[RMDB]
RNA sequence: GGGAACGACUCGAGUAGAGUCGAAAAAGACUCUAUGCCCGUGACUGUUACGGACAAAUUCCGUAACCGUGUAGGCCAACAUCAAAGAUGCGUACCAAGCUGCGUUUCAACCUGCGUGGGUUGAGGCGACUUAGCGGAUUAAGGCGUUCUGCCCCAGCUAAAUGUAUGAGUUCGCUCAUACAUUUAGAAAAGAAACAACAACAACAAC
Reactivity to DMS in 0.01 (KOAc 150mM, MgCl2 10mM, bicine 150mM(pH8.5), 24C), signal-to-noise 4, nucleotides 027 to 156: a100g000a040c010u000c010u000a050u000g000c010c000c010g020u000g030a090c040u000g010u000u010a000c010g030g000a050c060a160a090a180u010u000c010c000g020u000a010a020c010c080g000u000g020u000a230g010g010c010c020a100a060c010a030u010c040a080a100a170g000a100u000g020c020g010u000a100c030c020a050a130g010c020u000g000c020g020u010u000u010c000a030a020c030c010u000g040c300g040u010g020g030g030u000u010g010a030g000g010c010g010a050c040u000u010a050g010c020g000g000a210u000u000a060a030g000g010c030g000u000u000c020u010g020c030c010c010c020a130g000
Reactivity to 2A3 in 0.01 (KOAc 150mM, MgCl2 10mM, bicine 150mM(pH8.5), 24C), signal-to-noise 9, nucleotides 027 to 156: a000g020a000c000u000c000u010a030u090g030c000c000c030g050u070g140a020c010u020g000u000u000a000c000g020g000a020c130a160a250a140u260u010c010c000g000u000a010a000c000c000g000u020g040u070a040g030g010c030c020a080a060c010a080u150c060a110a100a050g060a060u110g030c020g040u050a080c020c030a040a030g040c070u080g030c010g000u000u000u020c000a010a010c000c000u170g130c170g240u300g050g000g000u000u000g000a000g010g010c000g040a070c020u040u090a010g010c020g000g050a040u120u160a070a050g050g000c020g030u060u000c030u080g040c010c000c000c010a020g030